RNA sequence: GGGAACGACUCGAGUAGAGUCGAAAACAAAGAAAGAAGAAUCACCAGGAGGCAAGGAUCCUCAACUACGUUAUUCGGGCACCUUGAGUUGAGAGGAGCUAGUGGUGCGCCCGGCCUGGAGAUCAAAACACGACAGGCGGGUUCGCCCGCCUGUCAAGACAUAGGAGUAGUUCGCUACUCCUAUGUCAAAAGAAACAACAACAACAAC
Reactivity to 2A3 in 0.01 (KOAc 150mM, MgCl2 10mM, bicine 150mM(pH8.5), 24C), signal-to-noise 2, nucleotides 027 to 156: c020a010a110a020g270a180a200a000g150a110a010g050a040a020u010c010a000c000c000a000g020g000a020g090g000c010a030a290g060g000a030u000c000c000u000c000a000a000c010u300a080c080g120u150u050a050u130u140c000g000g040g000c000a020c000c000u120u240g000a000g000u000u000g020a010g000a000g000g000a000g000c000u040a030g100u030g130g000u010g000c030g010c000c000c000g010g000c000c000u000g000g010a080g000a030u040c010a010a050a040a050c080a030c150g010a000c000a000g040g000c060g000g000g000u040u060c090g030c030c080c000g020c000c000u000g000u000c000a000a000